[RMDB]
RNA sequence: GGGAACGACUCGAGUAGAGUCGAAAAACCUCGGAAAUCUCAACAAGCAAAGUAUGGAUUGAUAGACGGCCCGAUUUCUGUAACUUUACCCAGAAAUAUGGGCGUCUUCCGUGCUGCUUGUUGGGGACGUCCGGCGAGUAUUCGUACUCGCCGGACGAAAAGAAACAACAACAACAAC
Reactivity to 2A3 in 0.01 (KOAc 150mM, MgCl2 10mM, bicine 150mM(pH8.5), 24C), signal-to-noise 1, nucleotides 027 to 126: a000c010c000u120c130g060g100a160a170a160u000c000u010c000a030a000c000a000a000g000c030a190a000a000g000u060a210u000g000g040a000u110u200g140a090u120a170g000a010c000g300g090c000c000c000g000a000u000u000u000c000u000g000u040a000a090c000u150u230u220a000c150c000c000a000g150a000a000a070u180a300u190g000g000g000c000g000u000c000u040u000c000c000g000u000g000c000u000g000c000u000u000g000u000u000g000g000g000g000a000